About this RNA:
This 177-nucleotide RNA was probed chemically with 2A3 and DMS. The data come from the RNA Mapping Database (RMDB), libraries RFM100 and RFMREP. The reactions ran in a buffer of 150 mM KOAc, 10 mM MgCl2 and 150 mM bicine (pH 8.5), at 24 C. Values are in units of 0.01, from 0 to 300, in steps of 10.
RNA sequence: GGGAACGACUCGAGUAGAGUCGAAAAAAAGCAUGGAUAAUUGGAUUUCAGCAAAUAUUCGUGAAGAUUUCUGCAGAAAUUGAAGUAAAUAGCAGUUUAUGAAUUAAACGACAUUCAUGAUGUUUAAUCACAAUACUUUUUUCGAAAAGUAUUGUGAAAAAGAAACAACAACAACAAC
Reactivity to 2A3 in 0.01 (KOAc 150mM, MgCl2 10mM, bicine 150mM(pH8.5), 24C), signal-to-noise 6, nucleotides 027 to 126: a000a020a000g070c010a010u030g010g030a000u010a040a130u050u050g070g030a070u070u150u150c070a060g030c010a020a050a040u060a020u000u020c020g010u060g100a070a080g030a140u020u080u020c020u080g020c010a020g100a070a100a070u130u120g030a120a000g030u130a050a050a090u100a070g000c040a020g010u040u060u060a040u040g060a050a040u060u080a130a050a020c060g060a020c030a050u010u040c010a010u070g040a030u040g030u010u050u060a040a050
Reactivity to DMS in 0.01 (KOAc 150mM, MgCl2 10mM, bicine 150mM(pH8.5), 24C), signal-to-noise 5, nucleotides 027 to 126: a060a060a070g000c010a000u000g000g000a020u000a060a070u000u000g010g000a110u010u010u010c130a070g000c010a020a030a050u000a040u010u000c010g010u020g020a110a110g000a080u010u000u010c040u000g010c030a090g000a020a030a030u000u000g000a050a090g000u010a050a050a080u000a100g000c070a050g000u000u000u000a020u020g000a070a050u000u010a030a040a070c120g000a070c160a040u010u010c040a030u000g000a060u000g000u000u000u010a060a110